Description: Structure probing data (2A3) for a 177-nucleotide construct. Conditions: 150 mM KOAc, 10 mM MgCl2 and 150 mM bicine (pH 8.5), 24 C. Values are in units of 0.01, from 0 to 300, in steps of 10. For 2A3, 621 sequencing reads were counted. It was measured as part of the RMDB library OK2TST.

[RMDB]
RNA sequence: GGGAACGACUCGAGUAGAGUCGAAAAGCUAGUGAUCGGCACCCGCAGUGCGGUGUUCGCGCCGGUCAACGACCUGGGUUUGGUCAUGGUCUGGUCUGAUGCCGACGACAUGUUGGCCGAGCCGCGACCCUCACCUGACGUUCGCGUCAGGUGAGGGAAAAGAAACAACAACAACAAC
Reactivity to 2A3 in 0.01 (KOAc 150mM, MgCl2 10mM, bicine 150mM(pH8.5), 24C), signal-to-noise 1, nucleotides 027 to 126: g000c010u020a040g090u000g130a060u040c020g000g050c040a000c060c010c000g020c070a140g150u080g170c040g070g040u060g060u230u080c090g040c050g020c080c000g000g020u010c000a000a020c000g010a000c020c020u070g070g010g160u110u170u080g010g010u020c000a020u090g090g000u020c040u190g080g000u040c120u130g130a280u300g100c000c030g000a060c050g000a000c020a050u300g000u120u010g000g000c000c000g010a000g020c040c020g130c020g020a070